[RMDB]
RNA sequence: GGGAACGACUCGAGUAGAGUCGAAAACGUUGCUGCAUUAGCUUUGCUAGGUGGUGGGUGGAUGAUGUGGGAUUAUUUCAUCACGAAAAUGCAAGAGCCAGUCAACACUCAAGGAAAGAAGAGAAUGUCAUGUUAUGUCAUUCGUGACAUAACAUGAAAAAGAAACAACAACAACAAC
Reactivity to 2A3 in 0.01 (KOAc 150mM, MgCl2 10mM, bicine 150mM(pH8.5), 24C), signal-to-noise 9, nucleotides 027 to 126: c050g030u030u050g000c010u020g000c010a130u060u120a060g010c000u080u070u110g020c040u050a040g010g060u130g060g170u270g040g100g060u220g030g040a110u170g050a050u110g120u300g040g030g000a020u020u070a060u050u160u060c040a070u090c020a010c080g060a050a050a020a030u090g000c020a040a020g020a010g120c030c000a020g060u090c000a010a010c020a030c030u040c040a020a050g100g030a170a060a020g080a050a030g020a020g030a090a050u100g050
Reactivity to DMS in 0.01 (KOAc 150mM, MgCl2 10mM, bicine 150mM(pH8.5), 24C), signal-to-noise 6, nucleotides 027 to 126: c140g000u000u000g020c020u010g010c120a100u010u010a070g000c020u010u010u010g020c040u000a070g000g020u000g000g010u000g010g010g020u000g000g010a100u010g010a060u000g010u010g020g020g000a110u000u010a060u000u000u010c050a050u010c070a070c120g000a060a030a040a120u000g010c050a060a070g000a080g020c020c030a020g010u010c020a020a060c050a070c030u000c050a060a070g010g020a030a040a060g010a040a060g000a070g010a080a080u010g010